[RMDB]
RNA sequence: GGGAACGACUCGAGUAGAGUCGAAAACAACGCAGGAAAAGCGCAUGCUUAUCGGGACAACAACCCAACGCGGCAGGUGUACCAUGUACCAUUGGGCAAAACGUUUACUGGCGCGUUUCGAUUGAGGAAAUGCCCGAUGGUUCGCCAUCGGGCAUUUAAAAGAAACAACAACAACAAC
Reactivity to DMS in 0.01 (KOAc 150mM, MgCl2 10mM, bicine 150mM(pH8.5), 24C), signal-to-noise 1, nucleotides 027 to 126: c120a260a100c140g000c000a070g000g000a080a010a190a050g010c000g020c150a150u060g000c020u000u000a040u000c000g000g000g000a020c080a020a120c070a270a160c000c000c020a070a020c040g000c110g000g000c100a080g030g000u000g010u000a070c100c170a050u000g020u090a180c110c000a020u000u000g000g030g000c040a000a070a260a130c090g000u030u000u070a040c000u000g000g000c000g070c020g000u000u000u000c120g000a110u000u000g040a050g000g000
Reactivity to 2A3 in 0.01 (KOAc 150mM, MgCl2 10mM, bicine 150mM(pH8.5), 24C), signal-to-noise 1, nucleotides 027 to 126: c040a000a000c020g020c040a040g050g130a050a040a040a000g070c030g060c190a000u180g000c020u070u000a070u190c000g000g000g090a000c020a040a010c000a040a090c040c000c000a050a090c000g000c000g160g000c020a000g000g030u120g080u150a140c000c000a030u020g000u030a140c000c020a080u000u110g000g000g040c030a030a000a070a070c030g000u230u060u200a040c010u030g000g060c000g000c000g020u000u030u000c040g150a230u000u070g030a030g040g160
The record gives the reactivity of an RNA of 177 nucleotides to DMS and 2A3. The RNA was probed in 150 mM KOAc, 10 mM MgCl2 and 150 mM bicine (pH 8.5) at 24 C. For DMS the reverse transcriptase was MarathonRT. 2A3 adducts were read by reverse transcription with SuperScript II with manganese.